[RMDB]
RNA sequence: GGGAACGACUCGAGUAGAGUCGAAAACACGUUCGGCGCGGCCGGCGCACGCUCGGCGCGGAGCUACGAAUUGUCGGCCGGAGUCAACCGAAUGGCUACCAGCUUGAGCCGGUCCACCGCCUCGGCGAUCUUACUGGGGCUUCGGCCCCAGUAAGAUAAAAGAAACAACAACAACAAC
Reactivity to DMS in 0.01 (KOAc 150mM, MgCl2 10mM, bicine 150mM(pH8.5), 24C), signal-to-noise 2, nucleotides 027 to 126: c170a160c100g020u010u040c050g010g050c150g030c070g000g030c010c010g010g030c000g000c120a090c200g000c030u000c010g000g000c050g020c090g010g010a050g000c020u010a200c200g000a140a210u040u000g050u000c010g010g020c020c020g000g000a080g000u000c170a140a180c020c010g020a020a060u030g000g010c020u000a110c100c030a280g030c010u000u000g020a020g000c040c000g000g000u030c080c040a150c050c000g010c030c030u050c110g000g000c060g000
Reactivity to 2A3 in 0.01 (KOAc 150mM, MgCl2 10mM, bicine 150mM(pH8.5), 24C), signal-to-noise 2, nucleotides 027 to 126: c120a010c010g000u010u030c040g030g010c040g010c000g070g000c000c000g000g030c030g000c020a010c000g020c010u040c070g240g050c120g030c070g110g020a000g000c010u070a060c060g130a220a220u140u110g040u000c000g000g000c000c000g020g000a010g070u060c070a060a100c030c000g030a010a020u020g030g010c030u060a110c060c000a030g020c000u080u170g040a030g010c010c020g060g000u070c050c050a220c080c020g010c010c010u020c050g030g000c010g010
This 177-nucleotide RNA was probed chemically with DMS and 2A3. The reactions ran in a buffer of 150 mM KOAc, 10 mM MgCl2 and 150 mM bicine (pH 8.5), at 24 C. The DMS profile rests on 1,938 reads. Source: RMDB library OK1LIB, as collected in RNAgym.